Notes:
The record gives the reactivity of an RNA of 177 nucleotides to 2A3 and DMS. DMS adducts were read by reverse transcription with MarathonRT. It was measured as part of the RMDB library M2PK90. The 2A3 profile rests on 1,654 reads. 2A3 is a SHAPE reagent: it acylates the 2'-hydroxyl of flexible nucleotides of all four kinds.
RNA sequence: GGGAACGACUCGAGUAGAGUCGAAAAACAAAAUGAUUCCCACUCAGGGAAUCCCAUACAUCAUUCUCGCCCGAGCCGAGUGGGAGGGCCGGCUCACCGCAGGACAACCUGUUUAUAAAUAAAAAAACAUUAUAUCGUAGUUCGCUACGAUAUAAUGAAAAGAAACAACAACAACAAC
Reactivity to 2A3 in 0.01 (KOAc 150mM, MgCl2 10mM, bicine 150mM(pH8.5), 24C), signal-to-noise 2, nucleotides 027 to 126: a000c050a010a080a040a040u140g000a030u020u030c000c070c000a020c110u290c030a050g020g030g000a020a010u020c000c010c010a130u190a150c050a060u100c010a040u110u020c040u000c050g060c040c030c000g000a000g020c020c000g050a040g040u170g000g020g030a110g040g030g000c020c000g000g000c000u020c020a030c010c030g000c010a000g000g020a060c000a120a130c010c000u000g030u030u100u040a070u140a060a070a060u300a040a090a010a000a010a010a000
Reactivity to DMS in 0.01 (KOAc 150mM, MgCl2 10mM, bicine 150mM(pH8.5), 24C), signal-to-noise 2, nucleotides 027 to 126: a080c120a060a090a140a120u010g000a080u000u000c010c000c000a130c210u010c250a080g000g000g000a040a050u010c000c080c040a080u000a030c190a080u000c090a100u000u000c030u000c040g020c050c030c090g010a050g000c010c010g000a060g040u010g010g010g010a070g010g020g020c080c020g020g000c010u000c040a070c120c140g000c040a010g000g000a050c260a060a080c010c030u000g000u010u010u010a140u030a100a000a100u070a050a050a020a100a050a080a200